[RMDB]
RNA sequence: GGGAACGACUCGAGUAGAGUCGAAAAGCAGAGAAAGGGCAGAGAAAAUCUGAGGGUGAUGGCUGACAAACAAUCUGAAGGUCUGGAGGUCUAAGUUCCAAUCCCAAUUCACAUGGCAACUCACUAGUGUCCUUGGUUGAGUCACCAGCCCACCCUAGUACGGUAUGGUAUUCGUACCAUACCGUACAAAAGAAACAACAACAACAAC
Reactivity to DMS in 0.01 (KOAc 150mM, MgCl2 10mM, bicine 150mM(pH8.5), 24C), signal-to-noise 2, nucleotides 027 to 156: g000c060a040g020a060g000a080a100a100g000g000g020c050a100g010a120g010a090a040a100a150u010c050u010g000a130g000g010g000u010g010a070u010g030g000c010u000g020a130c090a120a100a170c060a060a070u000c040u010g040a070a090g010g020u000c020u000g010g000a090g000g020u000c030u010a050a160g020u000u000c010c020a060a160u010c040c000c020a060a160u000u000c060a080c110a060u020g010g000c050a030a050c030u000c040a050c070u000a120g000u000g000u000c020c050u000u000g010g020u000u010g010a100g000u000c080a080c000c000a050g000c020c020c000a070c010c000c000u000a150
Reactivity to 2A3 in 0.01 (KOAc 150mM, MgCl2 10mM, bicine 150mM(pH8.5), 24C), signal-to-noise 2, nucleotides 027 to 156: g010c020a010g010a000g060a090a080a020g030g020g020c040a010g030a010g020a080a140a040a080u050c070u130g050a050g010g010g000u020g020a120u090g020g020c040u010g010a030c060a020a130a010c000a020a050u050c050u190g070a070a010g030g010u030c040u020g050g010a030g030g000u010c020u080a070a050g030u050u020c030c010a020a080u070c010c010c030a020a040u170u130c090a050c030a070u090g040g000c010a050a070c020u030c030a050c040u060a040g070u030g040u140c000c010u040u030g020g000u030u050g010a020g030u030c020a020c070c010a020g000c010c000c000a020c000c000c010u050a050